An RNA of 177 nucleotides, treated with 2A3 and read out base by base. Source: RMDB library OK1LIB, as collected in RNAgym. Conditions: 150 mM KOAc, 10 mM MgCl2 and 150 mM bicine (pH 8.5), 24 C. Values cover nucleotides 27 to 126.
RNA sequence: GGGAACGACUCGAGUAGAGUCGAAAAAUCCAUUAAUCUUCUACACCAAUUUCGGUAAAAUCCACUUCAAUGUAUGGGAUACCGCUGGUCAAGAAAAAUUCGGUGGUUUAAGAGAUGGUUAUUAGUACGACACUGGUUCCUUCGGGAACCAGUGUCGAAAAGAAACAACAACAACAAC
Reactivity to 2A3 in 0.01 (KOAc 150mM, MgCl2 10mM, bicine 150mM(pH8.5), 24C), signal-to-noise 1, nucleotides 027 to 126: a000u030c000c000a030u030u030a030a090u090c050u130u100c000u000a000c000a000c080c000a000a000u030u030u030c000g010g010u160a160a220a110a000u080c050c000a160c040u190u020c300a200a070u250g030u010a100u030g210g000g000a000u000a000c000c000g000c050u030g000g240u060c100a010a100g000a100a220a030a000a000u080u080c040g000g000u040g020g010u000u050u090a030a000g000a000g000a010u030g000g000u000u100a000u000u080a130g060u000a000